[RMDB]
RNA sequence: GGGAACGACUCGAGUAGAGUCGAAAACUUUCGAGCUUCGGCUCGAAAGAAAAGGAACCAGGCACGGUGCCUGAGAACUGACUAGCUAAUACGGGAGCUAAUAAAUCUGAGCCUUCGGGCUCAGAAAGAUAAAGGUUUGGUUCGCCAAACCUUUAUCAAAAGAAACAACAACAACAAC
Reactivity to 2A3 in 0.01 (KOAc 150mM, MgCl2 10mM, bicine 150mM(pH8.5), 24C), signal-to-noise 2, nucleotides 027 to 126: c000u030u000u000c000g000a000g020c000u040u200c210g060g000c010u020c000g000a000a000a010g000a010a090a000a000g010g010a050a040c000c030a000g010g010c050a010c210g300g110u260g000c000c020u060g010a090g030a080a040c040u080g080a050c030u010a030g010c000u030a080a120u170a210c130g070g090g060a020g000c010u080a040a030u080a100a270a020u040c010u000g010a030g000c000c010u050u160c300g070g020g000c030u000c000a000g000a000a000a000
Reactivity to DMS in 0.01 (KOAc 150mM, MgCl2 10mM, bicine 150mM(pH8.5), 24C), signal-to-noise 2, nucleotides 027 to 126: c010u000u000u000c000g000a010g000c000u000u000c140g040g040c000u000c000g020a000a030a020g000a050a040a120a120g000g000a080a230c110c000a050g000g020c020a160c290g000g010u010g000c020c000u000g000a070g000a100a180c030u000g020a080c120u010a030g000c010u000a040a100u010a110c130g010g010g000a040g010c010u020a050a100u000a080a080a070u000c000u000g010a000g000c000c000u000u000c230g030g000g020c000u000c000a010g000a000a010a110

An RNA of 177 nucleotides, treated with 2A3 and DMS and read out base by base. DMS adducts were read by reverse transcription with MarathonRT. The data come from the RNA Mapping Database (RMDB), library M2PK50. Values cover nucleotides 27 to 126. The RNA was probed in 150 mM KOAc, 10 mM MgCl2 and 150 mM bicine (pH 8.5) at 24 C.